[RMDB]
RNA sequence: GGGAACGACUCGAGUAGAGUCGAAAACUAUUUGUUUGACUUAUGCAAACAUAGUCUACGAGCCCACUACUCCCAUUUCGUCAGCGCUGAUUGCAGUUGCAAAUUGGCUUGCCCCCACUAAUGCUUAAUAGUUCAUACUUCGGUAUGAACAAAAGAAACAACAACAACAAC
Reactivity to 2A3 in 0.01 (KOAc 150mM, MgCl2 10mM, bicine 150mM(pH8.5), 24C), signal-to-noise 9, nucleotides 027 to 129: c010u010a040u070u120u150g050u020u010u020g070a090c030u140u230a090u300g040c000a000a010a010c000a030u010a010g020u000c040u050a050c070g050a020g040c000c000c010a030c030u080a080c030u020c010c000c030a100u060u120u110c110g060u050c020a030g030c040g000c090u040g060a110u080u080g010c020a030g050u110u100g070c000a020a060a110u050u030g030g000c000u020u080g060c010c000c000c000c000a030c040u100a080a040u110g000c010u020u070a040a010u050a160
Reactivity to DMS in 0.01 (KOAc 150mM, MgCl2 10mM, bicine 150mM(pH8.5), 24C), signal-to-noise 7, nucleotides 027 to 129: c020u020a060u010u020u020g050u000u000u000g040a120c100u010u020a130u050g000c030a030a020a040c030a040u010a000g030u000c090u000a150c090g030a100g020c040c010c030a100c090u050a020c090u020c000c020c020a040u020u040u070c070g060u000c010a080g030c070g010c160u090g010a130u000u000g000c060a090g030u000u000g000c040a040a040a070u050u040g020g000c050u020u030g000c060c020c010c020c020a100c140u030a070a080u000g020c100u040u040a080a060u040a120